Annotation
The data come from the RNA Mapping Database (RMDB), libraries RFM100 and RFMREP. Structure probing data (DMS and 2A3) for a 177-nucleotide construct. For 2A3 the reverse transcriptase was SuperScript II with manganese. Reactivities are given for positions 27 through 126.
RNA sequence: GGGAACGACUCGAGUAGAGUCGAAAACGGAGGCUAAGAACUCAGGAUCUCCUAAUGGGAAUCCCUAUAACAAUUGCCUUGCGCAAUGGGGAACGGCCGGAAUUGAAGCAUCUCAGUACGGCCAGGAAUAGUUACAUGGAUUCGUCCAUGUAACUAUAAAAGAAACAACAACAACAAC
Reactivity to DMS in 0.01 (KOAc 150mM, MgCl2 10mM, bicine 150mM(pH8.5), 24C), signal-to-noise 9, nucleotides 027 to 126: c090g010g000a030g000g010c050u020a110a110g000a090a090c060u010c070a090g010g010a080u010c090u000c000c010u010a130a140u040g000g000g010a100a080u010c010c000c020u010a090u030a110a110c200a120a040u010u000g000c000c010u030u020g010c120g010c010a020a020u000g000g010g010g020a120a120c130g010g000c000c000g000g000a120a030u010u000g000a030a120g020c180a120u030c110u000c010a010g010u000a050c000g000g000c000c010a080g020g010a100
Reactivity to 2A3 in 0.01 (KOAc 150mM, MgCl2 10mM, bicine 150mM(pH8.5), 24C), signal-to-noise 9, nucleotides 027 to 126: c030g030g020a000g030g000c030u100a150a070g080a220a060c040u050c090a050g070g040a110u020c030u020c060c010u090a130a130u250g050g010g050a020a080u050c010c000c010u100a090u050a180a080c080a080a030u040u040g000c000c020u110u220g040c080g000c070a020a050u060g010g010g000g020a040a060c070g000g000c000c000g000g020a050a020u020u030g010a050a010g080c070a190u070c020u000c080a000g010u010a010c000g010g000c000c000a000g010g050a040